[RMDB]
RNA sequence: GGGAACGACUCGAGUAGAGUCGAAAAUGAAAUUAUGUUAUAUUCUUCAGCAAUAACUUCUGCCUCUACAUACAAUGGCGGGUUAAAAUCUCUAUGUUUUACUCUGACUGUAUCGCCAAUUGAUAUACAAUAACCCAAUAUUCGUAUUGGGUUAUUGAAAAGAAACAACAACAACAAC
Reactivity to 2A3 in 0.01 (KOAc 150mM, MgCl2 10mM, bicine 150mM(pH8.5), 24C), signal-to-noise 5, nucleotides 027 to 126: u070g020a070a020a030u150u090a070u140g020u070u070a140u020a090u260u070c050u130u080c030a000g030c050a040a180u050a070a020c000u080u060c020u070g020c000c010u020c010u070a070c040a150u130a040c020a060a100u030g030g000c030g010g010g020u040u050a040a100a030a060u040c070u000c050u120a090u230g090u030u060u050u040a050c040u070c050u050g050a070c020u020g040u120a060u120c020g000c030c010a060a020u060u060g100a070u080a000u020a270
Reactivity to DMS in 0.01 (KOAc 150mM, MgCl2 10mM, bicine 150mM(pH8.5), 24C), signal-to-noise 6, nucleotides 027 to 126: u010g000a060a060a100u000u010a030u000g000u000u000a110u000a130u010u010c090u010u000c110a070g010c070a070a080u000a040a040c040u000u000c030u000g010c040c010u000c120u000a070c120a070u000a060c100a050a070u000g010g010c040g000g000g000u000u000a030a030a060a080u000c100u000c120u010a070u010g010u000u000u010u000a080c070u000c050u000g000a100c070u000g020u000a050u000c030g010c040c040a040a090u000u010g000a070u000a060u000a150